Conditions: 150 mM KOAc, 10 mM MgCl2 and 150 mM bicine (pH 8.5), 24 C. The record gives the reactivity of an RNA of 177 nucleotides to DMS and 2A3. For DMS, 5,972 sequencing reads were counted. The 2A3 profile rests on 4,464 reads.
RNA sequence: GGGAACGACUCGAGUAGAGUCGAAAAAAAAAGAUAUGGACAUGAACUACAGCGAAAGUAGCCGUUGAAAGUUCAUCGGAAACGAUGAACUGGAGGCUAUGAGUAGCUGCAUGUCCUAAGUCAAAAACAACAUAAAGUUGUUCGCAACUUUAUGUUGAAAAGAAACAACAACAACAAC
Reactivity to DMS in 0.01 (KOAc 150mM, MgCl2 10mM, bicine 150mM(pH8.5), 24C), signal-to-noise 4, nucleotides 027 to 126: a030a040a050a080a050g000a020u000a260u010g000g000a020c000a020u000g010a100a030c050u010a300c000a010g000c000g000a190a140a300g000u000a010g010c010c000g020u000u010g000a130a100a010g000u000u000c000a010u000c000g010g010a050a030a060c000g000a010u000g010a010a010c000u000g000g010a030g010g010c000u000a000u010g020a050g010u000a090g000c010u000g010c010a000u000g000u010c000c000u010a000a070g010u010c010a080a080a090a120a170
Reactivity to 2A3 in 0.01 (KOAc 150mM, MgCl2 10mM, bicine 150mM(pH8.5), 24C), signal-to-noise 1, nucleotides 027 to 126: a010a010a000a010a010g080a040u120a060u100g010g010a000c030a020u030g020a120a060c110u220a110c300a030g020c020g020a040a000a010g020u010a010g010c040c010g200u200u010g000a010a020a000g000u000u000c000a000u010c000g030g020a050a040a020c010g000a000u000g000a000a000c020u000g000g030a060g000g010c000u000a000u010g000a010g010u000a000g100c000u010g000c000a000u010g000u000c000c000u000a080a040g020u000c020a000a050a000a120a200